[RMDB]
RNA sequence: GGGAACGACUCGAGUAGAGUCGAAAAGAUAUGGACUGUUAUGGUUCGCUGGGACUAUUCGGAAACGAACGAAUCCCAGACCCGAAACGUCAGUCCUAAGUCAAAGGAGACUGUUCGCAGUCUCCAACACACCGACAUACUUCGGUAUGUCGGUGUGAAAAGAAACAACAACAACAAC
Reactivity to DMS in 0.01 (KOAc 150mM, MgCl2 10mM, bicine 150mM(pH8.5), 24C), signal-to-noise 2, nucleotides 027 to 126: g000a060u000a300u000g000g000a000c000u010g000u020u000a060u010g000g030u000u000c010g020c040u030g000g000g000a020c120u000a300u020u000c020g000g030a090a070a250c040g000a000a020c050g010a100a090u000c000c000c000a010g000a050c150c230c150g010a000a020a030c010g000u000c020a000g010u000c000c000u000a030a110g000u000c020a130a110a150g010g010a000g010a020c000u000g010u000u030c220g000c020a010g020u000c000u010c010c010a040a040
Reactivity to 2A3 in 0.01 (KOAc 150mM, MgCl2 10mM, bicine 150mM(pH8.5), 24C), signal-to-noise 2, nucleotides 027 to 126: g040a000u120a060u220g010g000a000c000u030g070u250u170a110u140g080g010u020u030c020g000c020u010g000g010g010a060c140u090a070u120u030c000g030g040a230a100a050c090g010a040a010c020g040a080a150u000c030c000c050a010g000a040c080c000c020g040a050a020a010c040g050u040c000a000g010u020c010c000u060a160a090g040u120c040a050a060a060g000g050a010g000a000c050u010g010u100u070c300g000c180a020g010u050c000u000c030c000a000a000

The record gives the reactivity of an RNA of 177 nucleotides to DMS and 2A3. The reactions ran in a buffer of 150 mM KOAc, 10 mM MgCl2 and 150 mM bicine (pH 8.5), at 24 C. It was measured as part of the RMDB library TTRDEL.